[RMDB]
RNA sequence: GGGAACGACUCGAGUAGAGUCGAAAACAAAAACAAAACAAAAAGAAAAGGACCACUGGACAGGGGUACUGCCUUUUCGGGGCAGCUGUCCGGUCAAGGCCAUACGGACAGCCGGGUCCACUGCCGACGACAAGUUGCAGUUCGCUGCAGCUUGUCGAAAAGAAACAACAACAACAAC
Reactivity to 2A3 in 0.01 (KOAc 150mM, MgCl2 10mM, bicine 150mM(pH8.5), 24C), signal-to-noise 5, nucleotides 027 to 126: c020a040a040a030a010a010c080a020a080a020a000c070a010a090a030a030a020g160a060a110a020a010g010g000a010c000c000a000c010u010g010g010a000c000a020g000g000g050g010u090a080c010u000g000c010c000u040u070u110u140c090g010g000g000g000c000a010g000c000u000g000u000c000c000g000g000u010c010a010a050g010g000c000c000a020u040a030c010g000g000a000c010a000g000c000c000g020g000g000u010c000c000a000c010u030g000c000c020g030a060
Reactivity to DMS in 0.01 (KOAc 150mM, MgCl2 10mM, bicine 150mM(pH8.5), 24C), signal-to-noise 3, nucleotides 027 to 126: c020a050a070a070a080a050c200a100a070a070a070c160a060a060a080a100a110g020a150a040a180a110g000g000a010c000c000a040c020u000g000g000a060c010a010g000g000g030g050u030a220c020u010g000c000c000u010u010u030u110c220g000g020g010g010c020a000g000c000u010g010u010c000c000g000g000u000c140a030a050g000g010c000c020a070u020a060c010g000g000a020c000a160g000c020c020g000g000g020u000c010c000a050c100u040g000c000c000g010a300